[RMDB]
Chemical mapping of a 207-nucleotide RNA with 2A3 and DMS.
Values cover nucleotides 27 to 156.
DMS adducts were read by reverse transcription with MarathonRT.
2A3 adducts were read by reverse transcription with SuperScript II with manganese.
Conditions: 150 mM KOAc, 10 mM MgCl2 and 150 mM bicine (pH 8.5), 24 C.
It was measured as part of the RMDB library M2RFPK.

RNA sequence: GGGAACGACUCGAGUAGAGUCGAAAAUGGGCCGUGUGCUUAACCAGGACAAGAUCUCCUUCUCUCCAACGUUGUUGCCAACUCAUGAUUCUCCUAACCUGUGCUUGGCGAGACGUGGACCCAGAGUAAAACGAAGGGUGCUUCGGCACCCUUCGAACGAGUAAACUAAGUUCGCUUAGUUUACUCGAAAAGAAACAACAACAACAAC
Reactivity to 2A3 in 0.01 (KOAc 150mM, MgCl2 10mM, bicine 150mM(pH8.5), 24C), signal-to-noise 4, nucleotides 027 to 156: u060g020g000g000c060c040g130u120g050u110g070c040u090u080a050a060c040c060a030g000g050a020c060a060a070g040a160u050c010u040c030c020u070u050c040u000c000u000c010c030a100a120c080g000u030u080g230u180u070g040c000c010a010a010c030u000c030a040u070g070a160u230u060c130u090c100c070u080a070a090c020c020u030g010u020g020c100u030u000g020g000c000g010a010g000a010c000g000u000g000g020a040c040c010c000a040g010a040g030u170a020a080a070a030c010g010a000a000g010g010g000u000g010c030u020u070c100g040g010c000a000c000c000c000u000u000c000g000a000a000
Reactivity to DMS in 0.01 (KOAc 150mM, MgCl2 10mM, bicine 150mM(pH8.5), 24C), signal-to-noise 2, nucleotides 027 to 156: u000g010g010g040c020c040g030u010g050u000g000c020u000u050a070a110c080c040a060g000g030a120c060a080a100g010a150u010c040u000c010c010u000u000c020u000c010u000c000c030a080a100c060g010u000u000g010u010u000g000c000c030a050a050c020u030c030a030u000g010a060u010u000c040u010c120c060u020a050a060c030c010u010g010u000g010c090u000u010g090g030c030g000a100g020a030c030g040u000g030g010a080c030c030c040a190g000a110g020u000a030a060a070a190c020g010a010a020g020g020g030u000g020c000u010u010c240g060g020c000a000c010c000c000u000u000c000g000a010a100